This 177-nucleotide RNA was probed chemically with 2A3 and DMS. Reactivities are given for positions 27 through 126.
RNA sequence: GGGAACGACUCGAGUAGAGUCGAAAAGGCAACUGUUUUGCGAGCUUAUUUUUGGGUUUAGGUGUUCUGCUUUGAGGGGCUUGCUCCGUUCUGCUUUACAAUUAACAACUAAUUUAGAACUGUGACGCAUCCUGAAUGGAUUCGUCCAUUCAGGAUGAAAAGAAACAACAACAACAAC
Reactivity to 2A3 in 0.01 (KOAc 150mM, MgCl2 10mM, bicine 150mM(pH8.5), 24C), signal-to-noise 8, nucleotides 027 to 126: g050g000c020a030a030c080u070g040u050u070u060u060g040c030g020a020g020c030u070u070a070u130u190u050u100u100g050g000g020u040u040u100a070g010g020u030g020u050u050c010u030g070c030u050u070u070g040a050g000g040g010g000c020u050u060g020c010u010c010c000g020u020u020c020u030g040c010u060u050u030a040c030a070a100u090u080a160a050c080a030a030c050u080a030a080u060u090u090a060g030a090a040c060u030g040u080g070a030c040g000
Reactivity to DMS in 0.01 (KOAc 150mM, MgCl2 10mM, bicine 150mM(pH8.5), 24C), signal-to-noise 7, nucleotides 027 to 126: g010g010c060a060a090c080u010g010u000u010u000u010g020c040g010a100g010c050u020u010a050u010u000u000u010u020g010g000g000u000u000u010a080g000g000u000g000u000u000c040u000g010c040u000u010u000g010a090g010g010g000g000c070u010u010g010c040u010c020c030g000u000u000c020u010g000c050u000u010u010a050c150a040a080u010u010a070a110c180a050a100c150u020a030a050u010u010u020a050g010a050a040c070u010g010u010g000a080c130g000
The RNA was probed in 150 mM KOAc, 10 mM MgCl2 and 150 mM bicine (pH 8.5) at 24 C.